Source: RMDB library TTRDES, as collected in RNAgym. Structure probing data (DMS and 2A3) for a 177-nucleotide construct. For DMS the reverse transcriptase was MarathonRT.
RNA sequence: GGGAACGACUCGAGUAGAGUCGAAAAGAUAUGGACUCUGCAGCUUUUGACGAUUGUAGUCGGAAACGACUACAUCAGAUCGAUAAGCUGACAGAGUCCUAAGUCAAAACUGACGUUCGCGUCAGAAUCCAGAAACAAAGUUCGCUUUGUUUCUGGAAAAAGAAACAACAACAACAAC
Reactivity to DMS in 0.01 (KOAc 150mM, MgCl2 10mM, bicine 150mM(pH8.5), 24C), signal-to-noise 3, nucleotides 027 to 126: g000a050u000a300u020g010g000a010c000u010c020u010g020c000a020g000c010u010u000u000u000g000a040c040g000a050u000u020g030u000a010g010u000c010g010g010a140a080a230c020g010a010c000u000a000c000a010u000c040a130g000a160u000c010g010a040u020a020a010g010c000u000g010a160c010a010g000a010g000u000c000c000u010a010a080g010u000c050a130a100a120a200c010u000g000a010c040g010u000u010c250g010c000g040u000c020a020g010a130a140
Reactivity to 2A3 in 0.01 (KOAc 150mM, MgCl2 10mM, bicine 150mM(pH8.5), 24C), signal-to-noise 3, nucleotides 027 to 126: g020a030u080a020u140g010g000a010c000u010c010u010g000c000a020g020c030u060u140u130u230g070a030c020g030a030u100u300g000u010a000g000u010c010g000g030a050a050a000c000g000a000c000u010a010c000a010u020c040a050g110a190u020c020g070a080u030a300a010g000c020u000g040a020c010a000g030a010g020u010c010c000u000a000a000g000u000c000a020a010a090a100c010u010g020a010c000g020u040u070c300g000c000g250u000c000a000g020a020a120